[RMDB]
RNA sequence: GGGAACGACUCGAGUAGAGUCGAAAAGUGAGGGCAUGCAGGCCUGGAUGGGGCAGCUGGGAUGGUCCAAAAGGGUGGCCUCACCAGCCCUGUGUUCCCUAGAAAGGCCCGUCCUUCGGGACGGGCCCUCAACGUACUAGUUCGCUAGUACGUUGAGAAAAGAAACAACAACAACAAC
Reactivity to DMS in 0.01 (KOAc 150mM, MgCl2 10mM, bicine 150mM(pH8.5), 24C), signal-to-noise 2, nucleotides 027 to 126: g040u010g000a050g010g000g000c100a030u000g010c020a020g000g020c290c000u000g010g010a100u010g040g020g000g030c050a120g010c030u000g000g030g000a290u010g020g000u000c030c040a080a030a150a200g020g010g020u010g000g010c020c000u000c020a040c000c000a000g020c300c020c000u000g020u010g000u000u000c000c010c000u010a050g000a080a080a120g010g000c010c010c000g030u000c000c000u000u000c190g060g040g010a010c000g000g010g000c000c020
Reactivity to 2A3 in 0.01 (KOAc 150mM, MgCl2 10mM, bicine 150mM(pH8.5), 24C), signal-to-noise 1, nucleotides 027 to 126: g170u170g080a030g000g000g020c010a000u040g060c000a000g020g000c000c010u000g000g030a210u030g010g000g000g000c020a020g020c050u090g020g010g070a170u200g130g100u160c040c020a130a100a040a050g170g030g070u120g080g020c000c000u000c010a020c000c010a000g020c010c000c020u000g000u010g010u010u020c000c000c000u000a010g090a060a110a000g000g010c020c000c000g010u010c000c010u020u070c200g010g010g000a000c000g000g020g000c010c000